[RMDB]
RNA sequence: GGGAACGACUCGAGUAGAGUCGAAAAGAAUGCUCGUCCUCUCCUAAGAAAAAGAAUGGUGUGCGGAUGGUAAGAAAAAGAAUGGAGAGGACGAGCUAAGAAAAGAAUCCAUCCGCACACCUAAGAAGGGUAAUAUCUAGUUCGCUAGAUAUUACCCAAAAGAAACAACAACAACAAC
Reactivity to DMS in 0.01 (KOAc 150mM, MgCl2 10mM, bicine 150mM(pH8.5), 24C), signal-to-noise 2, nucleotides 027 to 126: g000a110a030u050g000c010u020c000g000u000c000c000u010c010u000c000c000u030a100a080g010a070a060a050a180a140g000a070a050u070g000g010u000g000u000g000c000g010g000a020u000g010g000u010a070a090g050a030a030a090a040a000g020a070a070u040g010g020a010g000a020g000g000a000c000g000a000g000c000u010a010a100g010a090a070a010a030g010a140a090u070c000c010a000u000c000c000g000c000a000c000a000c000c000u000a010a080g000a160a060
Reactivity to 2A3 in 0.01 (KOAc 150mM, MgCl2 10mM, bicine 150mM(pH8.5), 24C), signal-to-noise 6, nucleotides 027 to 126: g100a110a060u210g000c000u010c010g000u000c000c000u000c010u020c000c000u120a140a130g180a160a110a040a010a010g280a070a120u230g000g000u020g010u000g000c000g000g020a000u010g010g030u120a080a090g200a130a110a030a000a000g260a080a070u190g010g000a000g000a000g000g010a000c000g000a000g000c000u000a000a000g000a000a030a000a000g060a020a040u040c010c000a000u000c000c000g000c010a000c000a000c000c000u000a010a010g050a050a080